[RMDB]
RNA sequence: GGGAACGACUCGAGUAGAGUCGAAAAUUAUCGCACAGUGGAAGAGCACAAACCAUUGGUUUGGGUCUCGCAUCCGUUAAUUGGUCCUUGAAAACCGGAUUAUGGUAUUUAGUCCUUUGGAGUGUUCUUCUCUUCUCUUAUUCGUAAGAGAAGAGAAAAAAGAAACAACAACAACAAC
Reactivity to DMS in 0.01 (KOAc 150mM, MgCl2 10mM, bicine 150mM(pH8.5), 24C), signal-to-noise 9, nucleotides 027 to 126: u010u010a020u000c040g020c150a070c140a120g020u010g010g020a070a090g010a050g020c040a140c020a020a030a040c020c010a200u020u030g020g020u000u000u000g000g000g000u020c020u010c020g000c100a080u000c090c010g010u000u010a020a040u000u000g010g000u000c000c020u010u020g010a080a040a100a060c110c080g000g000a050u010u010a040u010g000g010u020a060u010u010u000a060g000u000c010c010u000u010u000g010g000a170g000u010g000u000u000c050
Reactivity to 2A3 in 0.01 (KOAc 150mM, MgCl2 10mM, bicine 150mM(pH8.5), 24C), signal-to-noise 7, nucleotides 027 to 126: u050u010a040u060c020g030c040a050c040a070g050u080g060g080a140a030g020a030g030c020a010c020a040a030a020c000c030a210u070u300g020g000u020u030u030g050g010g080u060c010u000c030g040c010a030u020c000c010g010u020u050a020a010u070u050g050g000u020c030c000u050u150g110a050a040a020a050c040c030g000g030a030u060u050a050u130g070g030u050a090u070u090u070a050g020u040c000c000u040u080u100g050g010a080g010u070g030u030u010c000

Structure probing data (DMS and 2A3) for a 177-nucleotide construct. Reactivities are given for positions 27 through 126. The reactions ran in a buffer of 150 mM KOAc, 10 mM MgCl2 and 150 mM bicine (pH 8.5), at 24 C. Reactivities are rounded to 0.1 and cut off at 0 and 3. Source: RMDB libraries RFM100 and RFMREP, as collected in RNAgym.